[RMDB]
RNA sequence: GGGAACGACUCGAGUAGAGUCGAAAACAACACGUCCUCGUCGUACAGAGUGGUAACAUGUGUCACCACAUAUCCAAGCUAGGGUACACGGGCUUGACCCAACCCCUUGGGCGGAUGGUGGCACAUGAAAAGAAGUAACACUUCGGUGUUACUUCAAGCCUAUGACUAGGUUCGCCUAGUCAUAGGCAAAAGAAACAACAACAACAAC
Reactivity to DMS in 0.01 (KOAc 150mM, MgCl2 10mM, bicine 150mM(pH8.5), 24C), signal-to-noise 2, nucleotides 027 to 156: c030a090a120c100a130c100g030u000c010c000u000c080g000u000c030g030u030a150c070a100g020a190g040u000g000g000u010a080a210c000a030u000g010u000g000u000c010a040c010c000a040c050a110u010a080u000c000c000a010a190g000c110u000a120g010g050g110u000a040c160a060c070g010g040g020c030u000u030g000a170c010c000c000a090a120c020c000c010c000u000u000g000g010g030c130g000g020a140u000g020g030u000g010g030c020a000c000a000u000g010a020a030a100a200g000a010a020g020u000a010a010c000a000c010u000u020c300g020g010u000g000u000u000a000c000u000u000c000a010a100
Reactivity to 2A3 in 0.01 (KOAc 150mM, MgCl2 10mM, bicine 150mM(pH8.5), 24C), signal-to-noise 5, nucleotides 027 to 156: c050a010a020c020a030c120g130u110c000c010u030c020g150u040c040g030u110a100c070a090g060a030g060u070g040g120u140a100a030c000a010u000g000u000g010u000c000a000c000c010a070c060a170u290a010u070c010c000a010a000g050c020u080a030g000g000g020u020a010c040a010c060g000g020g000c020u230u300g180a300c000c000c000a010a030c010c000c000c000u000u000g000g000g000c010g030g000a030u010g000g000u000g010g000c010a000c000a000u000g000a000a000a000a010g000a000a000g000u000a010a000c000a000c010u030u030c200g100g000u000g000u000u000a010c000u000u000c000a000a010

Conditions: 150 mM KOAc, 10 mM MgCl2 and 150 mM bicine (pH 8.5), 24 C. Structure probing data (DMS and 2A3) for a 207-nucleotide construct. It was measured as part of the RMDB library M2RFPK. Reactivities are given for positions 27 through 156. For DMS, 2,845 sequencing reads were counted. High DMS reactivity at an A or C suggests that its Watson-Crick edge is free. For DMS the reverse transcriptase was MarathonRT.